[RMDB]
RNA sequence: GGGAACGACUCGAGUAGAGUCGAAAACUACCGGCGGAGGGUGAUCCACUCGGAGUUGGACGGGAAAAGCACAUCCAGAGGACCCCUUCGACGAACAGAAGGAUCUGGUACCGGGGAGGAAUAGCCCAUACCGUCCCCUUCGGGGGACGGAAAAGAAACAACAACAACAAC
Reactivity to 2A3 in 0.01 (KOAc 150mM, MgCl2 10mM, bicine 150mM(pH8.5), 24C), signal-to-noise 3, nucleotides 027 to 129: c010u040a010c020c020g000g050c030g000g000a010g000g000g050u070g010a200u020c040c010a040c020u070c070g020g000a010g030u160u080g060g000a040c010g040g060g020a040a120a000a000g010c030a080c040a080u000c000c020a040g020a020g050g030a060c020c000c000c020u000u000c000g050a070c000g050a110a010c000a050g060a000a040g060g000a070u050c020u110g000g000u070a090c020c030g000g000g000g000a030g000g000a060a010u040a060g040c000c000c030a000u050a080
Reactivity to DMS in 0.01 (KOAc 150mM, MgCl2 10mM, bicine 150mM(pH8.5), 24C), signal-to-noise 2, nucleotides 027 to 129: c020u010a120c130c030g020g010c060g020g000a040g010g010g020u010g000a020u020c000c100a060c040u070c110g080g010a060g000u030u010g080g020a150c050g010g000g020a030a180a010a300g020c180a100c130a130u000c000c080a070g010a140g010g010a110c090c260c000c040u000u000c040g010a160c070g020a090a090c160a030g050a110a100g000g090a070u030c010u050g040g000u090a020c080c140g010g010g010g010a050g020g000a050a010u000a200g020c000c110c000a110u200a050

An RNA of 170 nucleotides, treated with 2A3 and DMS and read out base by base.
The reactions ran in a buffer of 150 mM KOAc, 10 mM MgCl2 and 150 mM bicine (pH 8.5), at 24 C.
For DMS, 2,674 sequencing reads were counted.
It was measured as part of the RMDB library 15KLIB.
For 2A3, 3,305 sequencing reads were counted.